[RMDB]
RNA sequence: GGGAACGACUCGAGUAGAGUCGAAAAGGGGCCCGAUAGACCGAAUAGUGCCGCGACAGCGAGGCUCCGCUGCCCAGCAAAUACCGGCCUCGGGAACCGGGGGAGUACGCCAAGGUGCUGGGUACUCCUCAGUACCGGUGUUCGCACCGGUACUGAGAAAAGAAACAACAACAACAAC
Reactivity to DMS in 0.01 (KOAc 150mM, MgCl2 10mM, bicine 150mM(pH8.5), 24C), signal-to-noise 3, nucleotides 027 to 126: g030g000g000g000c010c000c010g000a070u030a090g000a120c090c040g010a130a140u040a130g000u020g000c010c050g010c110g010a100c120a050g010c020g000a130g010g010c100u010c050c030g010c090u000g000c010c000c040a130g060c050a030a070a070u010a090c120c010g000g000c030c050u000c050g000g010g000a070a070c030c010g000g000g030g000g010a020g020u000a000c020g000c040c010a070a130g020g000u000g000c070u000g000g000g000u000a000c010u010c010
Reactivity to 2A3 in 0.01 (KOAc 150mM, MgCl2 10mM, bicine 150mM(pH8.5), 24C), signal-to-noise 4, nucleotides 027 to 126: g000g000g010g000c000c000c000g020a050u080a070g070a060c020c000g030a100a050u150a130g090u050g060c020c020g060c060g080a040c010a030g030c010g050a100g080g020c020u030c010c020g000c060u040g010c010c010c010a030g030c010a050a090a050u190a080c050c000g020g000c000c010u030c020g040g000g030a050a080c020c000g000g030g000g000g000a030g010u040a040c080g090c110c030a040a070g090g010u100g040c030u000g010g010g000u020a020c000u020c000